[RMDB]
RNA sequence: GGGAACGACUCGAGUAGAGUCGAAAAACUAUCAUGUAAGCUCUAUGAGAGCAUGGGCUUUGUCUGAUUUCCACACUGCUGUAUCCCCAGGGCCCUGAACUGAGCCUGGCAUACAGCAGGCCCUCAAUACAUAUUUACAGAAUGAACAAGCAUCCUACCCCAUAUCCAGGUUCGCCUGGAUAUGGGGAAAAGAAACAACAACAACAAC
Reactivity to 2A3 in 0.01 (KOAc 150mM, MgCl2 10mM, bicine 150mM(pH8.5), 24C), signal-to-noise 1, nucleotides 027 to 156: a000c130u130a120u150c000a040u080g010u080a020a020g000c000u000c040u110a120u270g190a110g000a000g070c000a000u030g000g000g000c010u070u080u250g040u080c050u030g070a110u070u000u000c000c000a050c010a000c010u000g000c000u000g010u010a010u160c100c040c070c070a040g000g000g140c040c090c150u040g140a220a110c150u010g030a000g040c000c000u010g000g010c000a000u000a000c000a000g010c000a000g000g000c000c000c000u040c050a110a000u030a140c010a010u090a120u100u210u020a120c050a000g080a300a170u070g000a100a020c040a040a190g090c030a070u050c040c030u100a140

This 207-nucleotide RNA was probed chemically with 2A3. Conditions: 150 mM KOAc, 10 mM MgCl2 and 150 mM bicine (pH 8.5), 24 C. It was measured as part of the RMDB library OK3TST.